[RMDB]
RNA sequence: GGGAACGACUCGAGUAGAGUCGAAAAUGAACGCUUUCGAAGGAAAGCUUGACCAGCUAAACUUCUGCAACGCCAUUACGAGGACUGCCCUUAGAGGCUCAUGGCGAUAGGUCACCCCGCCGGUCGGUUAAGAAUCAGCGAUUCGUCGCUGAUUCAAGGUUACCUAAUUGUUCGCAAUUAGGUAACCAAAAGAAACAACAACAACAAC
Reactivity to 2A3 in 0.01 (KOAc 150mM, MgCl2 10mM, bicine 150mM(pH8.5), 24C), signal-to-noise 4, nucleotides 027 to 156: u130g030a120a020c080g050c080u080u140u080c050g030a040a020g020g030a150a130a000g010c000u020u030g010a010c000c000a010g010c020u090a210a230a010c040u060u040c050u140g020c050a070a030c010g000c010c000a040u120u120a060c110g030a060g130g060a070c070u100g020c010c000c000u070u120a090g050a180g040g000c000u030c050a020u030g010g000c000g040a080u120a040g030g000u050c010a070c010c010c010c000g030c030c050g060g050u050c040g000g020u120u060a150a030g010a000a000u000c000a010g000c000g020a010u040u040c190g050u020c000g120c000u000g000a000u000u000c000a000a010
Reactivity to DMS in 0.01 (KOAc 150mM, MgCl2 10mM, bicine 150mM(pH8.5), 24C), signal-to-noise 1, nucleotides 027 to 156: u000g020a100a100c070g010c030u000u010u000c060g000a230a120g000g000a040a110a050g010c000u000u000g020a100c120c030a130g020c020u040a040a110a160c040u000u000c020u000g080c030a090a110c020g000c020c000a040u000u000a180c140g020a150g000g000a050c060u000g000c000c010c020u000u000a150g020a100g000g060c020u000c060a050u000g000g000c020g000a070u000a070g020g010u010c020a050c000c000c050c300g020c050c030g030g030u010c020g000g000u030u000a120a140g020a000a000u000c010a010g040c010g000a040u000u020c300g000u000c000g040c000u010g020a010u000u000c000a010a090